[RMDB]
RNA sequence: GGGAACGACUCGAGUAGAGUCGAAAAGAUAUGGAUCCUAUGACGUCUGUGAACUAUGUCGGAAACGACAUAGGGAGACGCAUAGGGAUCCUAAGUCAAAACCCAUAGUCACUUCGGUGACUAUGGGGCCCUGUCAAUAGUUCGCUAUUGACAGGGCAAAAGAAACAACAACAACAAC
Reactivity to 2A3 in 0.01 (KOAc 150mM, MgCl2 10mM, bicine 150mM(pH8.5), 24C), signal-to-noise 4, nucleotides 027 to 126: g000a000u020a010u070g000g000a000u030c010c000u010a020u060g250a300c040g000u000c030u070g300u020g190a010a010c010u000a000u000g000u000c000g000g010a010a010a020c010g000a000c000a000u000a000g010g000g000a010g000a000c010g010c010a010u030a070g030g000g010a010u000c000c000u000a000a000g010u000c010a030a050a080a220c010c010c000a000u000a000g000u000c000a000c030u030u060c300g100g000u010g000a000c000u000a010u000g000g000g010
Reactivity to DMS in 0.01 (KOAc 150mM, MgCl2 10mM, bicine 150mM(pH8.5), 24C), signal-to-noise 3, nucleotides 027 to 126: g010a030u020a120u010g000g000a070u000c000c010u000a000u010g010a210c050g010u000c000u000g000u020g010a180a270c000u000a000u000g000u000c000g010g000a050a030a060c000g000a010c000a000u000a010g000g010g000a000g010a010c010g040c000a000u000a080g010g000g020a020u000c010c000u000a000a060g000u010c010a110a070a130a300c000c010c000a020u000a010g010u000c000a000c000u000u010c240g030g010u010g010a020c000u010a000u000g000g010g000